[RMDB]
RNA sequence: GGGAACGACUCGAGUAGAGUCGAAAAACUGGAAACAUACCUGUUGAGAGAAUCUAGCAACAUUACUUCGCUGGCAACAUGUUGCAGGAUAUGUUUUUAUAGCAAGUAAUAAAUAGGUUCAAUGAAACCAUUACGACUAGUUCGCUAGUCGUAAUGGAAAAGAAACAACAACAACAAC
Reactivity to 2A3 in 0.01 (KOAc 150mM, MgCl2 10mM, bicine 150mM(pH8.5), 24C), signal-to-noise 4, nucleotides 027 to 126: a000c120u110g060g040a060a070a010c050a030u190a120c020c000u000g050u070u050g070a100g010a010g010a080a020u000c000u010a020g040c050a020a060c010a100u030u030a020c020u040u040c140g030c020u040g040g000c030a020a000c010a060u020g040u040u100g110c130a060g150g000a030u020a010u030g010u000u040u020u040u110a110u040a010g010c030a040a000g020u050a010a030u030a050a070a030u030a010g000g000u030u020c030a030a070u150g060a070a030a020
Reactivity to DMS in 0.01 (KOAc 150mM, MgCl2 10mM, bicine 150mM(pH8.5), 24C), signal-to-noise 3, nucleotides 027 to 126: a070c110u010g040g010a160a150a030c060a010u020a040c060c020u040g020u000u000g000a030g020a150g040a030a050u020c030u000a000g000c160a070a160c220a060u000u010a010c020u000u010c150g000c010u010g000g030c300a000a030c030a000u000g030u000u000g020c300a120g010g000a020u050a000u000g010u000u000u010u020u010a130u050a080g000c000a020a010g000u020a010a010u000a020a080a090u000a010g010g010u000u000c010a090a080u060g020a060a060a120